RNA sequence: GGGAACGACUCGAGUAGAGUCGAAAACUCUUCUUUCCCUUCUCUCGUCUUCCUCGGUCAACCUCUUGAGUUCCCCUUCUUCCUCCUCGCUGAGGCGCUUCCCUCCUGCGGAGAGCUGCUUCUUCUUAUAGUGCGCACUUCGGUGCGCACAAAAGAAACAACAACAACAAC
Reactivity to 2A3 in 0.01 (KOAc 150mM, MgCl2 10mM, bicine 150mM(pH8.5), 24C), signal-to-noise 2, nucleotides 027 to 129: c040u020c040u000u070c040u000u030u030c000c000c000u050u020c020u000c000u010c000g040u010c010u130u120c010c000u020c060g000g000u080c020a020a060c000c000u060c000u010u050g010a030g040u010u010c030c000c000c000u020u020c010u010u010c000c000u000c000c000u040c010g000c030u020g010a010g030g000c000g000c010u020u000c000c050c000u010c020c020u010g000c000g040g010a060g000a000g080c040u070g060c000u030u040c000u020u000c000u020u040a100u010a080